[RMDB]
RNA sequence: GGGAACGACUCGAGUAGAGUCGAAAACUGCUUAUGAUUUCUGCCAAACCAGAAGACUUGACUCUGGGAAGCAUUGGUUACCUGUGAACUUUGAAACUGACGGUCCCUGACGUAGUUUAGUCACCUGCGUAAUGCCUGUAUUCGUACAGGCAUUACGAAAAGAAACAACAACAACAAC
Reactivity to 2A3 in 0.01 (KOAc 150mM, MgCl2 10mM, bicine 150mM(pH8.5), 24C), signal-to-noise 4, nucleotides 027 to 126: c010u030g050c020u120u100a100u230g080a150u090u080u090c020u050g010c000c010a170a170a110c010c000a030g000a090a050g060a240c090u180u190g060a070c030u010c020u020g000g000g030a040a020g050c030a060u030u090g030g010u050u050a070c020c030u040g040u030g100a060a050c010u130u110u130g090a150a100a020c040u060g060a040c050g020g030u020c040c000c030u020g000a020c010g020u050a030g050u030u060u050a030g010u050c020a030c080c040u060g010
Reactivity to DMS in 0.01 (KOAc 150mM, MgCl2 10mM, bicine 150mM(pH8.5), 24C), signal-to-noise 4, nucleotides 027 to 126: c050u010g010c080u010u010a070u030g010a130u000u010u000c050u000g020c050c040a060a130a210c070c010a050g000a050a060g000a170c150u000u010g000a080c080u000c020u000g010g000g020a140a100g010c040a080u010u000g010g000u000u000a040c040c050u010g010u000g000a050a080c080u010u000u000g000a050a070a070c070u010g020a070c070g000g010u000c030c020c030u000g010a080c070g000u010a020g000u000u010u010a080g010u000c040a080c120c070u000g000